[RMDB]
RNA sequence: GGGAACGACUCGAGUAGAGUCGAAAAGCUAUUUCCUAGUUCAGUGACCUUGGACAAGGCACCCUGGGGAGCCUUAGCUGCUCAUAUGCACAAGCUUCUAGCAACUGCUUCCAAGGGAAGGGUGGGGAUAUCCCGACCCUUUCGAGGGUCGGGAUAUAAAAGAAACAACAACAACAAC
Reactivity to DMS in 0.01 (KOAc 150mM, MgCl2 10mM, bicine 150mM(pH8.5), 24C), signal-to-noise 1, nucleotides 027 to 126: g010c060u000a050u000u010u000c030c010u030a070g080u010u000c170a030g000u010g010a200c020c000u000u020g000g010a120c300a010a040g010g020c050a110c020c040c010u010g010g010g010g000a020g000c060c190u000u000a100g000c050u020g000c020u000c190a040u010a020u000g020c010a080c180a120a130g010c010u000u000c120u010a040g010c050a070a070c180u010g000c020u010u000c050c030a040a100g000g040g000a030a080g000g010g000u020g000g000g010g000